The record gives the reactivity of an RNA of 177 nucleotides to DMS and 2A3. For 2A3 the reverse transcriptase was SuperScript II with manganese. The 2A3 profile rests on 3,683 reads. It was measured as part of the RMDB library TTRDES. For DMS the reverse transcriptase was MarathonRT.

[RMDB]
RNA sequence: GGGAACGACUCGAGUAGAGUCGAAAAGAUAUGGACACAAUGAGGCGUGAACUACGAAUCCCAUCGGAAACGAUGGGUUUCGCACGCUGAGUGUCCUAAGUCAAAGACUGUUGUUCGCAACAGUCAACUUGGAGACUAGGUUCGCCUAGUCUCCAAGAAAAGAAACAACAACAACAAC
Reactivity to DMS in 0.01 (KOAc 150mM, MgCl2 10mM, bicine 150mM(pH8.5), 24C), signal-to-noise 3, nucleotides 027 to 126: g000a090u010a300u000g010g010a010c000a000c010a200a170u010g000a170g000g000c000g020u000g050a110a080c240u020a300c030g000a020a020u000c000c000c000a000u000c010g010g010a090a060a110c010g020a010u000g000g010g020u000u000u010c000g010c000a010c000g000c010u000g000a090g010u010g020u010c000c000u010a030a050g000u000c030a140a070a190g020a020c000u010g000u000u000g010u000u010c200g000c000a010a010c010a000g010u000c040a010a070
Reactivity to 2A3 in 0.01 (KOAc 150mM, MgCl2 10mM, bicine 150mM(pH8.5), 24C), signal-to-noise 2, nucleotides 027 to 126: g030a010u100a060u180g010g010a000c020a020c010a130a300u300g050a040g030g060c010g030u050g030a110a140c170u140a050c300g000a000a000u010c000c040c000a000u000c010g020g060a110a120a030c040g010a010u000g050g000g000u000u010u010c000g000c000a010c020g000c010u000g010a000g000u010g020u000c000c010u000a140a040g010u010c040a160a060a070g010a010c000u020g000u000u010g050u040u090c300g050c190a000a000c000a010g010u000c000a000a030